[RMDB]
Structure probing data (2A3 and DMS) for a 177-nucleotide construct. The 2A3 profile rests on 5,473 reads. For DMS the reverse transcriptase was MarathonRT. The reactions ran in a buffer of 150 mM KOAc, 10 mM MgCl2 and 150 mM bicine (pH 8.5), at 24 C. Source: RMDB library M2PK50, as collected in RNAgym. For 2A3 the reverse transcriptase was SuperScript II with manganese.

RNA sequence: GGGAACGACUCGAGUAGAGUCGAAAAAGCUCCUGUUUCGACAGGAGCUGUGUGGCUGCCCUUUUGUGCUCGUUGUAGAGUGCUUUCCUGCCGGAAAGGGCUUGAGAGCUUGAUUCGUCAAGCUCAAGUAACACGUCUAUUUCGAUAGACGUGUUACAAAAGAAACAACAACAACAAC
Reactivity to 2A3 in 0.01 (KOAc 150mM, MgCl2 10mM, bicine 150mM(pH8.5), 24C), signal-to-noise 3, nucleotides 027 to 126: a000g000c010u000c000c000u000g030u020u050u080c180g090a000c000a010g000g000a000g010c000u010g000u000g000u040g030g040c080u060g010c010c000c010u000u020u010u040g070u010g000c010u010c030g160u070u300g150u190a050g010a000g030u000g010c000u040u060u030c000c020u030g030c020c010g010g000a020a010a010g000g010g000c000u030u100g120a080g000a000g010c010u000u000g020a010u050u120c280g010u010c160a000a010g000c000u000c010a010a010
Reactivity to DMS in 0.01 (KOAc 150mM, MgCl2 10mM, bicine 150mM(pH8.5), 24C), signal-to-noise 6, nucleotides 027 to 126: a010g010c000u000c000c000u000g000u000u000u010c160g020a040c000a000g010g000a010g010c000u000g000u000g020u000g010g000c050u000g010c000c000c000u000u010u000u000g020u000g010c010u000c020g000u000u010g010u010a180g000a020g010u000g010c060u000u000u000c010c000u000g010c070c050g000g000a020a020a020g000g010g010c020u000u010g000a190g000a010g010c000u000u000g010a030u000u010c190g010u000c000a000a010g010c000u000c000a030a080